[RMDB]
RNA sequence: GGGAACGACUCGAGUAGAGUCGAAAAGAAUCACCGUACCUAUUUAGGUUUACGCUCCAAGAUCGGUGGAUAGCAGCCCUAUCAAUAUCUAGGAGAACUGUGCUAUGUUUAGAAGAUCAGGUAGUCUAUUACACAGCCAUGUUCGCAUGGCUGUGAAGUUUAGAUUCAGGUUCGCCUGAAUCUAAACAAAAGAAACAACAACAACAAC
Reactivity to DMS in 0.01 (KOAc 150mM, MgCl2 10mM, bicine 150mM(pH8.5), 24C), signal-to-noise 3, nucleotides 027 to 156: g010a150a100u000c000a110c050c020g030u010a040c020c010u010a180u000u000u000a070g030g000u000u000u000a060c040g020c020u000c000c010a070a080g010a040u000c050g010g000u000g050g010a110u000a070g010c060a200g040c110c070c000u000a110u000c040a100a150u010a110u000c070u000a120g010g010a120g020a060a070c030u000g020u000g020c060u010a100u010g030u000u000u000a100g020a090a100g000a070u000c040a060g020g000u000a070g000u000c030u010a110u000u010a190c010a020c000a020g000c000c000a010u000g020u010u000c250g030c000a010u000g000g000c020u010g000u000g000a010a060
Reactivity to 2A3 in 0.01 (KOAc 150mM, MgCl2 10mM, bicine 150mM(pH8.5), 24C), signal-to-noise 5, nucleotides 027 to 156: g060a020a060u090c010a010c030c010g020u070a040c000c020u080a130u250u240u300a040g000g000u000u060u030a020c020g000c000u000c010c010a040a000g010a040u020c020g000g040u030g050g070a050u060a030g070c100a010g010c010c000c000u060a060u080c070a080a060u030a020u180c020u020a020g020g000a040g010a040a060c050u050g030u030g060c030u040a020u110g070u050u080u050a120g020a120a020g020a140u080c040a010g020g050u040a030g050u020c030u050a120u080u120a060c000a000c000a000g000c000c000a000u000g020u020u020c070g010c100a000u000g000g000c000u000g000u000g000a000a000